The record gives the reactivity of an RNA of 207 nucleotides to DMS and 2A3.
RNA sequence: GGGAACGACUCGAGUAGAGUCGAAAAUAUAUUUACUGCUAAUCAUUUCAACUCCUGGCAGGCAGCCUAAUUGCAAGCACAAAGAGGAUGUUCAUGAGAAUCAUGGUCGUAUAACUUGUUCAGUGACUCUCAGUAAGACACAUGGUUUGUGAAAGCAAAUUAAUGACCCAUUCGUGGGUCAUUAAUUAAAAGAAACAACAACAACAAC
Reactivity to DMS in 0.01 (KOAc 150mM, MgCl2 10mM, bicine 150mM(pH8.5), 24C), signal-to-noise 4, nucleotides 027 to 156: u010a110u000a080u020u000u000a110c040u000g010c020u000a130a130u010c040a100u010u010u000c070a080a160c060u010c020c020u010g020g000c050a070g000g030c080a070g000c040c050u020a070a100u000u010g010c040a070a110g020c060a100c040a030a060a050g000a110g000g010a070u000g020u020u000c070a100u000g010a080g020a020a020u000c010a030u000g010g020u000c080g020u010a090u000a070a080c110u000u010g000u000u000c070a110g020u010g010a040c030u000c000u000c010a090g020u000a080a110g000a070c030a050c030a050u000g000g030u010u000u000g010u000g010a080a040a140g010c050a070
Reactivity to 2A3 in 0.01 (KOAc 150mM, MgCl2 10mM, bicine 150mM(pH8.5), 24C), signal-to-noise 4, nucleotides 027 to 156: u110a010u030a040u050u160u080a090c030u030g040c020u050a160a070u130c100a080u080u190u190c080a090a070c020u030c010c030u010g060g000c020a010g060g010c010a010g040c020c030u080a100a090u130u030g020c020a030a090g040c020a020c020a080a090a020g050a020g040g020a050u070g020u060u040c050a030u040g040a020g030a090a020u020c020a030u030g020g060u030c030g020u130a080u040a240a040c080u110u090g000u090u100c060a040g020u020g090a030c010u000c000u000c030a030g000u070a110a000g020a000c020a000c000a100u040g010g070u010u030u050g030u030g030a060a010a000g030c040a030

For DMS, 8,386 sequencing reads were counted.